[RMDB]
RNA sequence: GGGAACGACUCGAGUAGAGUCGAAAAGUACGUUCGUACGAGAGAGAUCACACUCGAUCACGAUCACUCGAGUUCUCGAGAACGAGUACUCACGUGAACGUACACGUGUGUACACUCUCGAGAACUCGUACACACUCGAACGUGUACACGAGUUCGACAUAAGCCUAGCGUUCGCGCUAGGCUUAUGAAAAGAAACAACAACAACAAC
Reactivity to DMS in 0.01 (KOAc 150mM, MgCl2 10mM, bicine 150mM(pH8.5), 24C), signal-to-noise 1, nucleotides 027 to 156: g000u000a030c010g040u000u020c050g060u000a070c030g000a160g010a250g040a200g050a070u000c100a180c160a180c040u000c060g070a170u000c060a110c110g000a200u010c000a080c070u060c010g000a030g030u000u010c010u000c000g010a040g000a000a130c000g100a180g000u010a000c000u000c010a010c010g010u000g070a110a300c190g000u000a160c010a020c000g050u000g000u010g010u000a000c030a200c040u000c010u030c000g000a070g010a020a010c010u020c000g020u000a020c060a070c080a130c040u000c000g010a110a040c130g020u010g030u000a090c100a080c040g010a090g000u010u000c010g000a300
Reactivity to 2A3 in 0.01 (KOAc 150mM, MgCl2 10mM, bicine 150mM(pH8.5), 24C), signal-to-noise 2, nucleotides 027 to 156: g050u050a000c090g010u010u070c000g000u060a120c100g010a010g000a010g000a000g010a040u120c060a070c010a040c060u010c020g030a050u030c020a000c050g020a040u070c030a010c130u000c010g000a000g000u000u000c000u000c000g010a010g000a020a000c100g000a090g030u030a000c000u010c020a010c000g010u010g130a300a040c150g060u210a070c010a000c000g020u000g020u000g010u000a000c000a030c020u000c000u000c000g000a020g000a000a000c000u000c000g000u020a000c000a010c010a000c030u040c020g020a010a010c040g040u050g020u110a040c090a010c070g110a080g070u040u050c020g000a000